[RMDB]
Structure probing data (2A3) for a 207-nucleotide construct. Reactivities are given for positions 27 through 156. It was measured as part of the RMDB library OK3TST. The 2A3 profile rests on 410 reads. 2A3 adducts were read by reverse transcription with SuperScript II with manganese.
RNA sequence: GGGAACGACUCGAGUAGAGUCGAAAACACAAUUGCCGCACCUACUGUAAUUGGCGAAAGAAUAGCACCUAGCACAAUGAUCAUCACUUUGUUCUUAAUUGAUACCACACUGUUAAUAACUUCUUGGUUCUUUGCAUUGGUAAGGUUUAUUUUGGCAACCGCGCUGUAGCUUCGGCUACAGCGCGGUAAAAGAAACAACAACAACAAC
Reactivity to 2A3 in 0.01 (KOAc 150mM, MgCl2 10mM, bicine 150mM(pH8.5), 24C), signal-to-noise 1, nucleotides 027 to 156: c050a000c010a030a060u100u060g030c070c020g030c070a110c020c000u110a060c050u060g050u080a120a040u200u090g020g030c020g050a080a040a040g030a040a080u100a060g030c070a070c000c050u000a000g030c010a010c040a050a100u150g030a050u130c020a020u050c000a080c080u090u100u060g000u040u000c050u010u110a160a090u030u100g050a030u050a050c020c020a030c010a000c110u020g020u110u050a120a060u010a010a010c000u000u110c020u130u200g110g000u030u110c050u070u080u110g060c000a140u200u020g030g000u070a030a010g030g000u000u120u000a050u020u050u070u040g060g020c000a090